RNA sequence: GGGAACGACUCGAGUAGAGUCGAAAAGAUAUGGAGUCGAGACCUGCGACGAUCCGUAACAUCAUUCGGAAACGAAUGUGGGGGAGCAGGUCUCGACUCCUAAGUCAAAUCACUGUUCGCAGUGAAACAAUGUUAGGAUGUUCGCAUCCUAACAUUGAAAAGAAACAACAACAACAAC
Reactivity to DMS in 0.01 (KOAc 150mM, MgCl2 10mM, bicine 150mM(pH8.5), 24C), signal-to-noise 6, nucleotides 027 to 126: g010a060u000a300u010g000g000a010g020u000c010g010a020g000a030c000c000u000g010c010g000a080c250g000a030u010c000c010g010u010a070a180c180a030u000c000a010u000u000c000g010g000a130a110a160c010g000a010a010u000g010u000g010g000g000g010g010a040g020c000a010g000g010u000c000u000c000g000a000c000u010c000c000u000a000a060g000u000c040a070a100a140u000c000a010c000u010g000u000u010c170g010c000a010g010u000g000a030a110a230